[RMDB]
RNA sequence: GGGAACGACUCGAGUAGAGUCGAAAAAGGAAGACAGUGAGUGGACGGAAUAAAUCCCCUUCCCACCUCCCCACUGUCCACUCACUGUCUUCCGAGAAGGAAAUAUAAAUCGGGGGUGGGAAGGGGAACUGCACGGGAUAUUCGUAUCCCGUGCAGUAAAAGAAACAACAACAACAAC
Reactivity to 2A3 in 0.01 (KOAc 150mM, MgCl2 10mM, bicine 150mM(pH8.5), 24C), signal-to-noise 1, nucleotides 027 to 126: a000g000g010a010a000g000a000c010a000g010u000g000a000g010u000g000g000a000c020g070g060a050a060u150a060a100a090u090c000c000c000c000u010u000c000c000c000a010c000c000u000c120c080c040c000a120c020u020g040u020c010c000a000c040u030c000a000c000u030g000u000c000u000u000c000c000g000a010g020a060a030g130g070a000a060a000u300a120u120a030a100a060u190c140g010g000g000g000g000u000g000g000g000a000a000g000g000g000g000a000
The record gives the reactivity of an RNA of 177 nucleotides to 2A3. The RNA was probed in 150 mM KOAc, 10 mM MgCl2 and 150 mM bicine (pH 8.5) at 24 C.